[RMDB]
RNA sequence: GGGAACGACUCGAGUAGAGUCGAAAAGAUAUGGACCCGAACAGGGAGCGUACCAUCGGAAACGAUGGUGACGCGUUGAUCUGUGGGUCCUAAGUCAAAAGGAUCGCCUAGUUCGCUAGGCGAUCCAGGUUCAUCAACUGUUCGCAGUUGAUGAACCAAAAGAAACAACAACAACAAC
Reactivity to DMS in 0.01 (KOAc 150mM, MgCl2 10mM, bicine 150mM(pH8.5), 24C), signal-to-noise 1, nucleotides 027 to 126: g000a040u000a020u000g000g010a030c000c020c000g020a140a220c000a030g010g000g010a010g020c000g030u000a080c000c000a010u000c000g000g010a010a000a020c010g000a000u010g000g000u000g010a000c020g030c000g000u010u010g000a000u010c000u000g010u010g000g040g040u000c000c000u030a000a060g090u020c000a090a080a240a150g000g010a000u000c010g020c000c000u010a000g000u010u020c280g070c000u000a000g000g000c010g010a000u000c000c010a020